[RMDB]
RNA sequence: GGGAACGACUCGAGUAGAGUCGAAAACUUCUGGACGCAAACUCUCGAUGCGUUGUUGAAGCAUCUACGCAGCCACGUCCAGGUUGCGCGUAGCACAGAAUGACUGACCCGAGUUCAUCAACAGACAGUAGGGUGAGAAAUUCGUUUCUCACCCUACAAAAGAAACAACAACAACAAC
Reactivity to 2A3 in 0.01 (KOAc 150mM, MgCl2 10mM, bicine 150mM(pH8.5), 24C), signal-to-noise 2, nucleotides 027 to 126: c010u040u000c010u040g040g040a030c020g000c040a090a040a210c060u060c030u060c200g010a020u070g000c010g070u050u090g150u070u110g080a050a000g020c010a050u000c020u060a040c000g010c050a010g000c050c030a060c030g090u070c060c010a040g070g000u000u050g040c060g000c020g090u140a010g000c050a010c020a080g110a140a060u070g040a100c050u040g080a050c000c010c010g020a010g000u030u110c030a070u040c010a060a080c010a020g070a000c010a030
Reactivity to DMS in 0.01 (KOAc 150mM, MgCl2 10mM, bicine 150mM(pH8.5), 24C), signal-to-noise 4, nucleotides 027 to 126: c070u010u010c010u010g010g000a010c040g000c100a080a100a120c140u000c100u000c150g010a130u010g000c020g030u000u000g020u020u000g000a040a130g010c060a060u010c020u000a080c070g000c070a030g000c020c040a120c100g000u000c090c050a070g000g040u000u000g000c020g010c080g000u000a060g020c100a100c070a070g010a060a050u010g000a030c070u000g010a100c010c020c010g010a080g010u000u000c070a120u000c070a020a060c040a090g020a110c240a090